Chemical mapping of a 177-nucleotide RNA with DMS and 2A3. Values cover nucleotides 27 to 126. The data come from the RNA Mapping Database (RMDB), library OK2TST. For 2A3, 540 sequencing reads were counted.
RNA sequence: GGGAACGACUCGAGUAGAGUCGAAAAUUACGAUUUGGAUACUAAUAUGUAUCAAACAAUGCGAGACUUGUACCGCAUAUAUUUCAGAGAGAAAUAUGAAACAGUUCAUCAAAAUAUGGUAUAAUACUCAGGGAAAACAUUUCGAUGUUUUCCCUGAAAAAGAAACAACAACAACAAC
Reactivity to DMS in 0.01 (KOAc 150mM, MgCl2 10mM, bicine 150mM(pH8.5), 24C), signal-to-noise 1, nucleotides 027 to 126: u020u020a100c070g010a150u000u000u000g000g010a000u000a010c000u010a150a170u000a120u010g040u000a000u020c010a130a010a130c180a230a010u000g000c030g010a130g030a070c110u000u010g020u010a050c010c010g030c040a050u010a070u000a000u010u000u010c010a080g000a260g000a140g000a010a030a000u000a010u000g010a170a060a170c160a020g000u000u000c070a080u010c110a060a040a050a010u020a020u010g000g000u020a050u010a030a070u010a010c160
Reactivity to 2A3 in 0.01 (KOAc 150mM, MgCl2 10mM, bicine 150mM(pH8.5), 24C), signal-to-noise 1, nucleotides 027 to 126: u050u030a050c060g100a030u000u000u140g120g000a040u030a030c030u050a050a230u120a140u290g000u000a000u050c000a000a060a000c040a000a010u120g080c050g000a040g050a030c000u100u120g140u200a010c040c000g000c040a000u000a000u000a040u200u030u030c080a080g100a000g030a010g000a300a000a000u040a010u040g070a000a100a000c000a060g030u100u060c040a030u030c040a080a000a040a090u290a050u110g000g070u180a010u010a120a070u130a160c050